Annotation:
The record gives the reactivity of an RNA of 177 nucleotides to 2A3 and DMS. Values are in units of 0.01, from 0 to 300, in steps of 10. Values cover nucleotides 27 to 126. The RNA was probed in 150 mM KOAc, 10 mM MgCl2 and 150 mM bicine (pH 8.5) at 24 C. For DMS, 2,395 sequencing reads were counted. 2A3 is a SHAPE reagent: it acylates the 2'-hydroxyl of flexible nucleotides of all four kinds.

RNA sequence: GGGAACGACUCGAGUAGAGUCGAAAAGGGGACACCAUGUGUAUAAGAACAUCAGCUGGUCGCCGGGGAUGGUGGCUUACGCCUGUAUUCCUAGCACUUUGGGAGGCCAAGGCGGAUGGAUCACGAGUCGUUGCAAAUUUUUCGAAAUUUGCAACGAAAAAGAAACAACAACAACAAC
Reactivity to 2A3 in 0.01 (KOAc 150mM, MgCl2 10mM, bicine 150mM(pH8.5), 24C), signal-to-noise 1, nucleotides 027 to 126: g080g000g010g000a000c010a020c060c000a060u080g040u040g010u030a130u030a300a070g050a070a020c030a060u070c030a000g060c030u050g040g000u080c100g000c000c000g010g020g000g010a020u100g000g100u030g000g000c000u100u090a080c100g000c040c030u040g010u090a040u000u050c000c000u010a000g030c060a050c080u150u190u130g040g000g020a030g000g000c030c000a030a060g080g000c010g000g010a010u100g020g010a030u040c040a030c060g060a080g030
Reactivity to DMS in 0.01 (KOAc 150mM, MgCl2 10mM, bicine 150mM(pH8.5), 24C), signal-to-noise 3, nucleotides 027 to 126: g030g000g000g010a100c070a060c040c050a090u020g010u000g000u010a120u020a080a110g000a070a090c070a050u010c060a070g000c070u010g010g010u000c040g010c050c020g010g020g010g020a060u000g010g020u000g000g010c050u000u010a050c170g030c040c000u010g020u000a090u010u000c010c010u000a070g010c130a090c110u000u020u010g020g000g010a090g000g000c090c090a050a090g010g010c040g020g010a060u000g010g000a070u000c040a070c090g010a090g010